[RMDB]
This 177-nucleotide RNA was probed chemically with 2A3 and DMS. For 2A3 the reverse transcriptase was SuperScript II with manganese. As a SHAPE reagent, 2A3 marks flexible, mostly unpaired nucleotides at the ribose 2'-OH. The data come from the RNA Mapping Database (RMDB), library OK1LIB. The 2A3 profile rests on 68,747 reads.

RNA sequence: GGGAACGACUCGAGUAGAGUCGAAAACGUCGUGAACUAGCGACAAUGCGUUAGAUCCAUCGUUAUCUAACCGAAACAUCGUGACUAGUCGUAGAAUAGAACCAGGAGAGGCCGCUGGCAAACAAAGACGGGUUGUCUGAUUCGUCGGACGGUCCGUAAAAGAAACAACAACAACAAC
Reactivity to 2A3 in 0.01 (KOAc 150mM, MgCl2 10mM, bicine 150mM(pH8.5), 24C), signal-to-noise 9, nucleotides 027 to 126: c050g020u020c010g030u040g080a100a060c040u020a060g010c010g030a010c000a020a060u130g030c060g010u000u000a000g000a010u000c060c040a190u090c130g100u140u040a010u000c010u000a010a010c020c010g030a050a060a040c030a060u090c040g060u060g060a060c030u020a020g030u030c030g040u050a030g040a100a030u090a070g050a050a030c010c010a010g020g030a080g010a030g040g020c000c000g000c030u010g020g000c020a020a060a030c030a020a110a010g120
Reactivity to DMS in 0.01 (KOAc 150mM, MgCl2 10mM, bicine 150mM(pH8.5), 24C), signal-to-noise 9, nucleotides 027 to 126: c100g000u000c040g010u010g000a110a070c050u010a070g000c030g010a060c080a100a060u030g000c130g000u000u000a000g000a010u000c090c080a130u040c230g000u020u010a030u000c010u000a010a020c010c040g010a110a110a110c140a090u020c050g010u010g000a080c040u010a030g000u000c040g010u010a070g000a070a090u020a060g000a100a090c030c030a040g010g000a090g000a080g000g010c010c020g000c030u000g000g010c080a050a050a060c120a060a080a070g000